[RMDB]
RNA sequence: GGGAACGACUCGAGUAGAGUCGAAAAGAACAUCAUCUACUUCGGCCGGGGCGCCUACGGCAUUUCGGCGGCGUCCAAGGCUUAUUUCGACAAGCCCGUCGAGCAGCUGACCGUUGCCGAAGGGGCGGCAGAAACAGUCAUUCGUGACUGUUUCUGCAAAAGAAACAACAACAACAAC
Reactivity to 2A3 in 0.01 (KOAc 150mM, MgCl2 10mM, bicine 150mM(pH8.5), 24C), signal-to-noise 3, nucleotides 027 to 126: g050a050a040c040a090u190c010a040u050c100u130a120c020u100u070c030g000g020c000c000g000g000g000g000c020g000c000c000u030a050c020g020g070c150a300u180u140u290c010g010g000c000g010g000c010g000u010c000c000a040a010g000g000c000u020u020a030u030u060u070c060g030a070c030a170a040g010c000c010c000g070u010c000g000a060g030c020a010g000c010u170g030a090c060c000g030u010u060g000c000c010g010a040a030g010g000g000g000c030g020
Reactivity to DMS in 0.01 (KOAc 150mM, MgCl2 10mM, bicine 150mM(pH8.5), 24C), signal-to-noise 1, nucleotides 027 to 126: g010a100a220c100a150u030c070a060u000c000u000a090c030u000u030c070g000g010c020c030g010g000g020g030c020g000c000c000u000a040c020g020g000c290a250u040u050u000c030g010g090c160g000g020c000g080u040c030c040a040a060g000g040c020u020u000a040u000u050u000c030g000a060c050a030a230g050c060c070c100g000u000c030g010a090g090c110a020g040c000u090g000a200c220c080g000u000u000g040c010c000g010a040a010g030g000g000g010c110g000